[RMDB]
RNA sequence: GGGAACGACUCGAGUAGAGUCGAAAACGGAUGACCAGCGGCAACAAUAAUUUCCAGCAACGACUGGAAAGAGUGGCAGCAGUGCUGUACCACGAAGGCGCCCUGACACCGGCUGCCCUUCAUGCACCACCUCCUGUGGUUUCGACCACAGGAGGUGAAAAGAAACAACAACAACAAC
Reactivity to 2A3 in 0.01 (KOAc 150mM, MgCl2 10mM, bicine 150mM(pH8.5), 24C), signal-to-noise 2, nucleotides 027 to 126: c000g010g030a300u030g080a130c080c010a030g000c060g020g040c050a040a020c010a120a050u140a100a100u010u010u000c010c000a000g020c020a120a220c210g200a250c020u030g000g000a000a000a020g060a000g000u020g020g000c020a020g000c040a030g140u070g240c020u040g020u140a170c030c010a010c030g010a060a000g060g000c020g010c020c000c000u030g010a010c000a000c010c020g070g020c060u050g040c000c010c010u000u070c110a150u190g020c000a030c060
Reactivity to DMS in 0.01 (KOAc 150mM, MgCl2 10mM, bicine 150mM(pH8.5), 24C), signal-to-noise 2, nucleotides 027 to 126: c010g000g000a070u010g000a130c150c000a000g020c080g000g000c000a070a140c090a110a160u030a070a190u000u000u000c000c000a010g010c030a240a240c260g030a180c010u000g000g000a000a000a000g000a050g030u010g010g000c050a000g000c020a140g000u010g030c000u010g000u030a070c010c000a000c020g020a080a070g010g000c300g000c010c010c010u000g010a080c030a030c030c030g010g000c020u000g000c000c010c010u000u000c110a040u000g020c150a140c150
Annotation:
This 177-nucleotide RNA was probed chemically with 2A3 and DMS. For DMS the reverse transcriptase was MarathonRT. For 2A3, 1,108 sequencing reads were counted. Reactivities are given for positions 27 through 126.